[RMDB]
RNA sequence: GGGAACGACUCGAGUAGAGUCGAAAAGAUCCUACCUUCGGGUAGGAUCAAAAAAACCUUUGUGCCACAGACAUGAUGAUGUCCCAGCCCAUUGGGCUGGACAAUAUCAACAGCUGUGGCACUCUGGUAAAAAGUUUCCUUGUUCGCAAGGAAACAAUACUACUAACUACUUCGGUAGUUAGUAGUAAAAAGAAACAACAACAACAAC
Reactivity to 2A3 in 0.01 (KOAc 150mM, MgCl2 10mM, bicine 150mM(pH8.5), 24C), signal-to-noise 2, nucleotides 027 to 156: g000a010u010c010c000u040a010c000c010u030u160c300g020g000g000u000a000g000g020a000u000c000a000a000a000a000a000a000a000c000c000u000u010u040g000u000g000c010c000a010c000a010g080a130c070a140u070g000a050u020g010a020u050g040u060c100c030c000a000g000c000c000c060a240u110u300g010g000g050c020u000g020g010a010c000a030a010u060a010u060c010a030a110c000a090g040c000u000g000u000g010g000c000a000c000u000c000u000g000g020u070a110a070a020a030a030g000u020u020u010c010c000u040u020g040u070u070c190g000c110a000a000g010g010a000a000a000c010a000a000
Reactivity to DMS in 0.01 (KOAc 150mM, MgCl2 10mM, bicine 150mM(pH8.5), 24C), signal-to-noise 1, nucleotides 027 to 156: g000a030u000c010c000u000a000c010c010u020u010c300g080g030g020u000a000g000g000a000u020c000a020a010a040a090a080a050a070c000c010u000u000u000g000u000g040c000c000a000c000a050g010a080c140a260u000g000a210u000g020a100u000g020u010c080c030c000a020g040c010c000c010a300u010u010g020g020g000c030u000g010g030a000c050a020a050u000a040u000c000a040a150c060a120g010c010u000g010u000g000g020c010a010c000u000c040u010g000g040u030a030a060a130a070a140g020u000u000u000c010c000u000u000g000u000u010c230g000c070a050a020g020g000a000a010a010c010a050a120
Annotation
Chemical mapping of a 207-nucleotide RNA with 2A3 and DMS. Reactivities are given for positions 27 through 156. For DMS, 2,456 sequencing reads were counted. It was measured as part of the RMDB library RNAMAK. For DMS the reverse transcriptase was MarathonRT. 2A3 adducts were read by reverse transcription with SuperScript II with manganese.